The data come from the RNA Mapping Database (RMDB), library OK2TST.
Structure probing data (DMS and 2A3) for a 177-nucleotide construct.
DMS adducts were read by reverse transcription with MarathonRT.
2A3 adducts were read by reverse transcription with SuperScript II with manganese.
The reactions ran in a buffer of 150 mM KOAc, 10 mM MgCl2 and 150 mM bicine (pH 8.5), at 24 C.
The DMS profile rests on 5,481 reads.
RNA sequence: GGGAACGACUCGAGUAGAGUCGAAAAUAGGGAACGGGAUCUCUUUGUUCCCAGAGAAGAGAUUGUCAGUCGACGCGCCAUAGCUGUAGUCGUCGUCCUCAUCAUAGUCUAGGCGUACGGCCCUGCCCGUAACCCUCCAAUUCGUUGGAGGGUUACGAAAAGAAACAACAACAACAAC
Reactivity to DMS in 0.01 (KOAc 150mM, MgCl2 10mM, bicine 150mM(pH8.5), 24C), signal-to-noise 4, nucleotides 027 to 126: u010a050g000g010g010a070a050c030g000g000g010a020u000c020u000c010u000u000u000g000u010u000c020c000c000a150g000a210g010a030a030g010a020g000a010u000u010g020u000c050a160g020u010c140g010a040c030g000c020g020c010c030a130u000a050g020c040u000g000u000a090g020u000c070g010u000c070g010u000c020c010u000c080a110u000c100a070u000a070g010u000c040u000a120g020g010c040g020u000a030c040g000g000c000c000c010u000g010c120c060
Reactivity to 2A3 in 0.01 (KOAc 150mM, MgCl2 10mM, bicine 150mM(pH8.5), 24C), signal-to-noise 2, nucleotides 027 to 126: u180a010g030g000g030a110a090c040g010g020g050a040u020c020u000c000u030u020u030g050u050u070c000c000c000a000g020a000g000a030a010g010a000g000a010u030u070g050u110c050a030g120u120c060g020a020c020g020c010g010c000c010a210u090a080g000c050u050g040u140a050g060u080c050g010u000c040g030u010c000c020u080c020a190u070c030a050u080a080g030u010c030u050a050g000g030c010g010u030a010c010g010g010c010c000c010u020g020c020c020